[RMDB]
RNA sequence: GGGAACGACUCGAGUAGAGUCGAAAAGAUAUGGAGUAGCACCAUCCUGAUGACCUCGGAAACGAGCAAGGGAGGUGAACUACUACUCCUAAGUCAAAAGCAAGUCCGUCUUCGGACGGACUUGCAAGAUUUCACCUAUGUUCGCAUAGGUGAAAUCAAAAGAAACAACAACAACAAC
Reactivity to 2A3 in 0.01 (KOAc 150mM, MgCl2 10mM, bicine 150mM(pH8.5), 24C), signal-to-noise 2, nucleotides 027 to 126: g050a020u100a040u190g000g020a000g010u010a000g030c000a000c010c020a300u030c000c000u090g070a270u150g060a130c030c000u000c010g000g060a090a080a060c020g020a010g020c030a060a140g020g010g000a020g040g000u040g020a020a020c060u240a020c000u000a020c010u040c000c000u020a100a050g010u030c030a060a050a090a050g000c000a000a000g030u000c020c000g010u010c010u070u170c300g070g000a000c000g000g010a000c000u000u000g000c000a000a000
Reactivity to DMS in 0.01 (KOAc 150mM, MgCl2 10mM, bicine 150mM(pH8.5), 24C), signal-to-noise 3, nucleotides 027 to 126: g010a050u010a300u010g000g000a050g010u000a000g010c010a010c000c010a110u010c010c010u000g010a140u010g000a120c300c010u010c000g000g000a140a110a130c000g020a010g000c070a090a170g000g000g000a110g000g000u000g010a050a020c070u000a300c010u000a010c000u010c000c010u000a050a140g020u000c040a060a070a110a120g000c000a030a020g000u000c000c000g000u010c000u000u000c220g030g010a010c030g000g010a010c000u000u000g000c000a050a020